[RMDB]
RNA sequence: GGGAACGACUCGAGUAGAGUCGAAAAAAGAUAUGGAGCCACGGGAGAAUCCGUGAAGUGCCAGGAGCGUCGGAAACGACGCUCCGGUAAUACUUCACCGAUUCGAAGAACGUGGCUCCUAAGUCAACUUAAUUUUUGAGUUCGCUCAAAAAUUAAGAAAAGAAACAACAACAACAAC
Reactivity to DMS in 0.01 (KOAc 150mM, MgCl2 10mM, bicine 150mM(pH8.5), 24C), signal-to-noise 2, nucleotides 027 to 126: a120a110g000a060u000a300u000g000g030a020g010c010c000a000c000g000g000g000a130g010a000a010u010c030c300g000u000g000a010a000g060u000g000c010c010a030g070g020a030g030c000g000u000c000g000g000a130a060a250c000g020a040c010g000c000u000c000c010g000g020u000a080a060u010a140c020u000u020c000a010c010c160g020a040u000u000c000g000a160a110g040a130a130c010g010u000g010g030c000u000c000c000u010a010a100g010u000c070a110a230
Conditions: 150 mM KOAc, 10 mM MgCl2 and 150 mM bicine (pH 8.5), 24 C. Structure probing data (DMS) for a 177-nucleotide construct. DMS adducts were read by reverse transcription with MarathonRT. The DMS profile rests on 1,343 reads.